[RMDB]
RNA sequence: GGGAACGACUCGAGUAGAGUCGAAAAUCGCCAUUCGUGGCGAAUGUAAGGGGUCGUGAGGAGACGAGGGACAUGGUCUGAAGCCUCCACGGACCAACAGCCUACCCACCGUCUCCCUCACGACGGAGGCACCCGACUUUACCAAUUCGUUGGUAAACGAUUAAAGUGUAUUCGUACACUUUAAUCGAAAAGAAACAACAACAACAAC
Reactivity to DMS in 0.01 (KOAc 150mM, MgCl2 10mM, bicine 150mM(pH8.5), 24C), signal-to-noise 3, nucleotides 027 to 156: u000c010g030c000c000a100u010u010c300g010u000g000g050c000g000a040a020u010g020u000a070a110g010g030g020g030u000c010g020u000g050a060g020g020a070g010a040c010g000a190g010g050g010a090c120a300u000g000g010u010c000u010g000a130a110g020c020c010u000c010c010a300c080g020g000a040c000c000a020a110c100a130g030c030c020u000a300c070c000c130a170c150c010g000u000c000u010c030c040c030u010c030a020c010g000a030c060g030g010a030g040g040c020a110c040c020c000g000a080c110u000u000u000a020c000c000a060a090u010u010c180g000u000u020g000g010u000a020a050a100
Reactivity to 2A3 in 0.01 (KOAc 150mM, MgCl2 10mM, bicine 150mM(pH8.5), 24C), signal-to-noise 8, nucleotides 027 to 156: u010c010g010c020c010a030u080u100c300g080u070g000g010c030g020a030a020u150g050u130a100a120g120g020g020g000u000c000g000u000g000a010g000g020a020g010a040c140g060a300g040g000g010a030c050a130u070g000g010u000c000u010g030a090a030g000c000c000u000c010c000a020c020g010g000a000c010c010a020a050c050a020g060c000c050u140a160c130c030c040a150c160c070g000u010c010u020c040c040c000u010c000a000c010g000a000c010g000g000a000g030g000c000a020c000c000c000g060a080c010u040u030u010a000c000c000a020a060u080u110c240g070u090u020g000g000u030a050a040a030